[RMDB]
RNA sequence: GGGAACGACUCGAGUAGAGUCGAAAAGCGGCGGAGACGACCGUAUCCGGUUCGGUCAACAGCGGGCUCAGCAGGGCGCGAUGCAGCCACAGCGACCUUUCCUCCUCGCGGGUCAACCGGCGGCUCGGUACUAGUGUCCCUUCGGGGACACUAGUACAAAAGAAACAACAACAACAAC
Reactivity to DMS in 0.01 (KOAc 150mM, MgCl2 10mM, bicine 150mM(pH8.5), 24C), signal-to-noise 1, nucleotides 027 to 126: g010c050g010g030c040g000g000a180g000a180c080g000a040c020c060g070u000a100u000c010c060g030g010u000u030c030g020g000u010c010a130a140c110a110g040c060g010g010g010c000u000c060a180g030c090a020g030g000g010c060g010c080g000a130u000g010c100a090g020c030c080a070c060a100g010c120g000a100c060c030u000u000u000c030c020u000c060c070u000c010g020c070g020g010g020u000c060a100a090c070c020g000g020c180g000g000c120u020c050g080